[RMDB]
Chemical mapping of a 177-nucleotide RNA with DMS. High DMS reactivity at an A or C suggests that its Watson-Crick edge is free.
RNA sequence: GGGAACGACUCGAGUAGAGUCGAAAACGACACGCCCUCCCUCUGGCCGCAGUCUGCAAGAGCUGCAUCGUCAAGUACCUGCAGACCAGCAAGUACUGCCCCAUGUGCAACACCAAGAUCCACGAGAAACAAACACUCCUUUCGAGGAGUGUUUGUUAAAAGAAACAACAACAACAAC
Reactivity to DMS in 0.01 (KOAc 150mM, MgCl2 10mM, bicine 150mM(pH8.5), 24C), signal-to-noise 2, nucleotides 027 to 126: c080g000a110c050a070c110g010c020c010c010u000c010c020c030u000c030u020g010g030c070c110g010c030a100g050u010c020u000g000c100a050a050g000a140g000c030u000g020c010a060u000c120g000u000c040a090a060g010u000a030c020c020u000g050c000a030g010a110c100c080a140g000c020a040a060g000u000a000c030u000g010c000c050c040c040a060u000g040u000g000c000a040a040c030a060c040c060a050a060g010a040u010c020c050a110c110g010a100g020a160

The RNA was probed in 150 mM KOAc, 10 mM MgCl2 and 150 mM bicine (pH 8.5) at 24 C.